[RMDB]
Source information: Source: RMDB library OK1LIB, as collected in RNAgym. Chemical mapping of a 177-nucleotide RNA with 2A3. The 2A3 profile rests on 436 reads. Values cover nucleotides 27 to 126. The reactions ran in a buffer of 150 mM KOAc, 10 mM MgCl2 and 150 mM bicine (pH 8.5), at 24 C.
RNA sequence: GGGAACGACUCGAGUAGAGUCGAAAACAUCACCUGAACGGUGUCAUGGACUUGAUGAACUGGCGUGAAUGGUUACGUUUCAGCUGGGCGUUCGCAUGCUACGCGUCACGAGGUGCGUACACCGAUAUCGGAUCGAGAGCUUCGGCUCUCGAUCCGAAAAAGAAACAACAACAACAAC
Reactivity to 2A3 in 0.01 (KOAc 150mM, MgCl2 10mM, bicine 150mM(pH8.5), 24C), signal-to-noise 1, nucleotides 027 to 126: c080a140u130c000a070c000c000u060g090a130a000c000g060g000u000g030u000c000a060u100g000g040a060c000u110u000g000a140u100g010a160a060c030u000g000g010c010g000u040g100a130a100u200g080g000u170u120a060c010g120u000u000u080c060a030g120c020u190g080g000g000c010g000u150u160c000g000c190a030u120g110c000u230a000c150g030c130g010u010c000a000c140g090a070g030g000u000g130c000g040u030a000c000a030c010c010g000a080u100a010